The record gives the reactivity of an RNA of 177 nucleotides to 2A3 and DMS. For 2A3, 9,982 sequencing reads were counted. DMS adducts were read by reverse transcription with MarathonRT.

[RMDB]
RNA sequence: GGGAACGACUCGAGUAGAGUCGAAAAUCUUGCACCUUCGGGUGCAAGAAAAUGUAAGCGCAUGCGAGCGCACAGCGCACGCUGAAAAACUGCCCAAAAGAAAAACUCAGCACUUCGGUGCUGAGAACAAUAGAGGAUGGUUCGCCAUCCUCUAUUGAAAAGAAACAACAACAACAAC
Reactivity to 2A3 in 0.01 (KOAc 150mM, MgCl2 10mM, bicine 150mM(pH8.5), 24C), signal-to-noise 5, nucleotides 027 to 126: u010c000u000u010g000c000a010c010c000u030u050c240g130g000g020u020g000c000a000a000g010a000a020a000a000u080g010u010a050a040g020c030g020c090a040u120g020c040g070a050g040c080g010c070a090c060a180g050c010g000c010a010c030g000c010u010g040a080a020a010a020a020c030u060g000c000c010c000a030a080a020a030g080a000a090a010a010a010c000u000c000a000g000c000a000c020u040u090c240g100g000u000g000c000u000g000a000g000a000a000
Reactivity to DMS in 0.01 (KOAc 150mM, MgCl2 10mM, bicine 150mM(pH8.5), 24C), signal-to-noise 6, nucleotides 027 to 126: u000c000u000u000g000c000a010c000c000u000u010c240g040g030g010u000g000c000a000a010g000a010a010a040a060u000g010u010a070a080g020c170g020c080a050u000g020c020g010a050g030c110g010c070a090c130a110g010c000g010c020a020c050g000c010u000g000a050a070a080a130a110c110u000g000c000c000c000a060a070a070a160g010a070a080a100a100a130c000u000c000a000g000c000a010c000u000u020c160g030g010u010g000c000u000g000a000g010a040a060